[RMDB]
An RNA of 177 nucleotides, treated with 2A3 and DMS and read out base by base. It was measured as part of the RMDB library OK2TRN. The RNA was probed in 150 mM KOAc, 10 mM MgCl2 and 150 mM bicine (pH 8.5) at 24 C.
RNA sequence: GGGAACGACUCGAGUAGAGUCGAAAAAAUUAUGGCGAGACUGUCAAUUUGCCUCCAGGUCUUUUAGGUAAUGUAGUUAAGUACACACAAUUAUGUCAAUACCUUAACACUACAACUAUGUGUGCACACCGAAUCAGAUUUUCGAAUCUGAUUCGGUAAAAGAAACAACAACAACAAC
Reactivity to 2A3 in 0.01 (KOAc 150mM, MgCl2 10mM, bicine 150mM(pH8.5), 24C), signal-to-noise 1, nucleotides 027 to 126: a030a030u300u160a120u090g020g010c030g000a010g070a030c050u100g010u090c030a100a190u000u040u220g030c010c030u000c020c030a120g010g040u000c010u030u130u030u130a060g000g030u000a090a040u120g000u030a030g020u020u050a080a070g100u040a010c000a010c000a000c060a000a210u280u100a150u110g050u050c020a040a040u020a070c010c030u000u070a090a000c010a000c040u120a020c020a100a010c080u100a100u240g070u010g000u020g000c020a000c010
Reactivity to DMS in 0.01 (KOAc 150mM, MgCl2 10mM, bicine 150mM(pH8.5), 24C), signal-to-noise 2, nucleotides 027 to 126: a030a030u020u010a060u000g020g000c070g000a120g010a110c060u010g010u000c030a060a080u020u000u000g020c020c010u010c030c040a070g000g010u010c010u000u000u000u000a030g000g000u000a040a090u000g010u000a050g010u000u000a040a070g040u000a020c060a030c020a050c020a070a130u000u010a070u020g040u000c160a090a160u000a020c090c020u000u020a060a050c090a060c080u020a050c210a030a050c120u000a060u000g010u000g000u020g020c070a030c110